An RNA of 207 nucleotides, treated with DMS and 2A3 and read out base by base.
The reactions ran in a buffer of 150 mM KOAc, 10 mM MgCl2 and 150 mM bicine (pH 8.5), at 24 C.
Source: RMDB library RFM130, as collected in RNAgym.

[RMDB]
RNA sequence: GGGAACGACUCGAGUAGAGUCGAAAAAACUGGAGUGAUGAAAAAGUAUCCUUAGGCGUGGUUGUGGCCGUCUUGGCCACCUUUGUGCCACUUGCCAGUGCUAGGACUUGUCAUAGUUACACUGACUGUGUUGCCCUGACGGUUUCGACCGUCAGAAAACGCAGAAAAUUUUCGAAUUUUCUGCGUUAAAAGAAACAACAACAACAAC
Reactivity to DMS in 0.01 (KOAc 150mM, MgCl2 10mM, bicine 150mM(pH8.5), 24C), signal-to-noise 2, nucleotides 027 to 156: a050a040c040u010g010g010a110g050u010g010a120u000g000a080a050a120a080a080g000u010a090u000c010c020u000u000a120g030g030c030g060u010g020g030u000u000g040u010g000g000c000c040g080u010c170u000u030g050g030c030c010a030c010c050u000u000u000g000u010g000c030c010a060c030u000u010g020c010c000a070g010u000g030c060u000a110g040g010a050c040u000u010g020u020c070a100u000a090g010u010u000a090c040a080c010u000g020a080c010u020g010u000g010u010u000g030c020c090c000u000g000a010c000g010g000u010u000u000c300g020a070c000c010g010u010c000a010g000a030a070
Reactivity to 2A3 in 0.01 (KOAc 150mM, MgCl2 10mM, bicine 150mM(pH8.5), 24C), signal-to-noise 2, nucleotides 027 to 156: a000a000c020u020g030g000a040g020u040g050a050u020g050a020a000a070a000a090g040u050a070u070c010c010u020u020a040g000g000c020g020u010g020g010u090u090g000u040g010g000c020c000g100u110c070u140u170g010g010c010c010a020c040c010u150u030u110g130u120g010c000c000a010c000u020u100g010c000c020a030g070u020g110c020u010a030g040g000a030c030u020u030g030u110c020a040u050a090g070u060u130a060c040a000c060u090g090a020c000u000g020u040g020u110u080g060c000c000c010u000g010a000c010g030g000u020u030u160c080g070a000c000c020g000u000c000a000g000a010a020